[RMDB]
RNA sequence: GGGAACGACUCGAGUAGAGUCGAAAACGAUGGUGGUCCUGAUAAUGGAUUUCGCUGGGAUUUCAUACCUACAAGCCGUGGUAGAAGUGGUAGAAACUCUGUAGCCUCAUCUCGAGAGCAGUCUCGUAAUGGAAGCAGAGCCGCUACACCUGAACGCUCAACGUACUGUAUUCGUACAGUACGUUGAAAAAGAAACAACAACAACAAC
Reactivity to 2A3 in 0.01 (KOAc 150mM, MgCl2 10mM, bicine 150mM(pH8.5), 24C), signal-to-noise 5, nucleotides 027 to 156: c030g060a070u130g010g050u020g010g020u000c010c000u050g060a130u140a180a090u120g050g020a020u070u160u180c080g010c070u030g010g000g070a040u050u110u070c050a050u110a100c000c020u060a080c030a090a030g060c050c040g060u060g000g000u050a030g010a120a010g020u020g080g020u080a090g110a030a090a030c020u000c000u000g030u040a060g120c010c020u080c020a090u050c080u020c040g010a010g000a030g040c090a040g140u030c010u000c010g010u030a000a050u040g010g010a060a020g000c010a000g000a010g020c030c000g030c000u020a020c000a030c010c000u030g060a060a010c040g010c050
Reactivity to DMS in 0.01 (KOAc 150mM, MgCl2 10mM, bicine 150mM(pH8.5), 24C), signal-to-noise 2, nucleotides 027 to 156: c030g010a090u000g020g020u000g010g000u000c010c020u010g010a140u010a090a130u010g020g000a120u000u000u000c040g000c030u030g000g020g000a150u010u010u000c050a110u010a130c040c000u000a080c040a040a130g020c020c010g030u000g010g040u000a070g010a070a100g030u000g000g030u000a090g040a120a030a020c020u000c020u000g020u010a080g010c040c050u010c020a050u010c040u000c010g010a060g020a050g020c300a120g010u000c000u000c030g020u000a030a020u000g000g010a300a300g000c000a030g020a060g050c010c030g000c010u000a020c030a050c030c010u020g040a090a100c100g010c110